[RMDB]
RNA sequence: GGGAACGACUCGAGUAGAGUCGAAAAGUCAGUCAUUAGCUCAAGGGAGAGAGAGAAAGAGGUCAUCUGGCUCACUGCCUGUGGGCUUUAUGUAGAGAUUUGGUAGCAACUCUCUUAGGCAGUGGUGGAUUUAGCAAUCAUUCGUGAUUGCUAAAUCAAAAGAAACAACAACAACAAC
Reactivity to DMS in 0.01 (KOAc 150mM, MgCl2 10mM, bicine 150mM(pH8.5), 24C), signal-to-noise 7, nucleotides 027 to 126: g010u010c050a120g010u000c040a070u010u000a070g010c040u000c040a090a070g010g000g000a050g000a060g010a080g010a080g000a050a070a070g000a060g010g010u010c120a080u000c040u000g010g010c030u000c010a040c020u000g010c030c040u000g010u010g010g000g010c040u010u000u000a020u010g010u010a060g000a040g010a050u000u000u000g000g000u020a110g010c040a030a050c070u000c010u000c020u000u000a050g000g000c010a040g010u000g000g000u000g020
Reactivity to 2A3 in 0.01 (KOAc 150mM, MgCl2 10mM, bicine 150mM(pH8.5), 24C), signal-to-noise 6, nucleotides 027 to 126: g050u040c030a010g020u020c010a040u030u110a030g000c010u020c040a040a050g030g040g010a030g000a010g010a000g000a010g040a040a160a000g060a030g040g100u080c030a090u020c060u040g030g000c010u020c010a010c010u080g100c020c020u090g030u080g040g020g000c000u020u070u030a070u050g070u040a010g010a010g010a100u050u030u090g070g020u090a050g090c010a000a050c010u010c000u000c000u030u040a040g000g000c010a020g020u030g040g050u080g070